This 177-nucleotide RNA was probed chemically with 2A3 and DMS. DMS adducts were read by reverse transcription with MarathonRT. The 2A3 profile rests on 1,382 reads. Conditions: 150 mM KOAc, 10 mM MgCl2 and 150 mM bicine (pH 8.5), 24 C. Values cover nucleotides 27 to 126.
RNA sequence: GGGAACGACUCGAGUAGAGUCGAAAAUGAUGAUAUGGAAAUUGCUUUCUUGAAUUCUCAUUCAAAAGCUGAAAUUGUUGAUAUGCUUCGUAAACAUACAUAUAUUGAUGAGCUUGAACAAAGCAAGGUGAAGAGCAUAAUUCGUUAUGCUCUUCACAAAAGAAACAACAACAACAAC
Reactivity to 2A3 in 0.01 (KOAc 150mM, MgCl2 10mM, bicine 150mM(pH8.5), 24C), signal-to-noise 2, nucleotides 027 to 126: u150g050a020u020g000a020u040a070u280g090g080a030a110a070u140u070g000c010u070u070u010c000u020u040g010a020a010u190u000c100u080c120a030u070u010c010a020a050a000a020g010c010u030g030a070a050a050u110u090g030u030u160g040a090u070a020u110g070c040u020u090c030g090u100a000a170a020c000a020u070a040c020a020u090a020u040a030u080u180g080a110u070g000a030g050c040u030u030g030a040a020c080a070a020a000g000c030a010a000g100
Reactivity to DMS in 0.01 (KOAc 150mM, MgCl2 10mM, bicine 150mM(pH8.5), 24C), signal-to-noise 5, nucleotides 027 to 126: u000g000a110u000g010a100u010a090u010g000g000a050a070a090u010u000g000c060u000u000u000c060u000u010g000a070a100u010u010c070u000c060a150u000u000c050a050a060a060a040g010c020u010g010a090a040a050u010u000g000u000u000g000a130u000a020u000g010c040u000u010c300g000u000a110a080a050c020a010u000a030c030a020u000a060u000a040u000u000g010a180u010g000a040g020c110u000u010g000a090a040c190a070a030a040g010c050a060a050g000